Structure probing data (2A3 and DMS) for a 207-nucleotide construct. The data come from the RNA Mapping Database (RMDB), library M2RFPK.
RNA sequence: GGGAACGACUCGAGUAGAGUCGAAAAGCUUCCUCUUGGCGCGGAGGUUUAACUGCGCUCGCCCCCCAUAUCGGUGUGGGCGCACCGGAUUUACAAAUUAAAGUCCUUUAGGGAGCGGAAAGGGACAAAAACUUGCACGUGUUCGCACGUGCAAGAACUUAGCACAUAACUUCGGUUAUGUGCUAAGAAAAGAAACAACAACAACAAC
Reactivity to 2A3 in 0.01 (KOAc 150mM, MgCl2 10mM, bicine 150mM(pH8.5), 24C), signal-to-noise 3, nucleotides 027 to 156: g020c050u130u060c000c000u010c000u030u020g010g000c000g010c000g020g000a010g000g000u050u170u030a010a020c020u050g000c000g010c010u010c000g040c000c000c030c000c020c010a040u040a070u130c050g010g000u020g000u040g040g000g020c000g000c010a000c000c050g060g010a030u030u150u170a110c140a010a050a040u090u120a130a070a010g020u020c000c000u010u030u030a080g020g010g000a030g040c030g010g050a100a050a000g070g010g030a010c060a030a090a030a020a000c000u000u000g000c000a000c010g010u000g050u090u050c080g030c090a000c000g000u000g000c010a000a000g000a000a000
Reactivity to DMS in 0.01 (KOAc 150mM, MgCl2 10mM, bicine 150mM(pH8.5), 24C), signal-to-noise 2, nucleotides 027 to 156: g020c060u000u000c010c010u000c050u000u000g000g000c060g070c040g010g020a200g030g010u010u000u000a070a160c020u000g000c040g010c000u010c050g000c010c000c020c000c000c080a140u000a060u010c000g000g030u010g030u000g080g000g030c100g000c010a010c030c030g010g020a230u000u000u000a260c200a070a110a110u000u010a050a090a120g030u000c020c000u010u010u010a050g000g020g000a040g020c000g020g040a050a050a070g000g000g040a090c080a100a050a070a110a170c000u000u000g000c000a000c010g080u000g030u000u000c260g010c020a020c000g000u000g020c010a010a000g010a010a100
For DMS the reverse transcriptase was MarathonRT. The reactions ran in a buffer of 150 mM KOAc, 10 mM MgCl2 and 150 mM bicine (pH 8.5), at 24 C. The 2A3 profile rests on 2,239 reads. The DMS profile rests on 2,903 reads. Values are in units of 0.01, from 0 to 300, in steps of 10.